[RMDB]
RNA sequence: GGGAACGACUCGAGUAGAGUCGAAAAUACGCUGGUAGCAGCAAGUAGCAGCUCUAUCCGCAGAUGAGCGGAAUAUACAAAUGAAAAUGGAUCUCGAUAGAGCUGCUACAAUCGAGACCAUUAGAGAACCCAUUACGCUCUUCGGAGCGUAAUGGGUAAAAGAAACAACAACAACAAC
Reactivity to 2A3 in 0.01 (KOAc 150mM, MgCl2 10mM, bicine 150mM(pH8.5), 24C), signal-to-noise 1, nucleotides 027 to 126: u300a000c040g000c000u000g020g060u290a100g290c070a000g000c000a000a210g000u090a000g030c000a000g040c000u020c000u090a000u070c000c000g000c000a030g030a300u060g030a070g000c050g000g030a020a000u050a000u000a020c130a000a150a040u300g070a070a020a060a020u020g000g000a150u000c000u000c000g000a080u050a050g000a000g060c000u000g000c000u000a000c000a000a000u000c000g000a000g000a000c000c000a000u000u000a080g000a000g000a010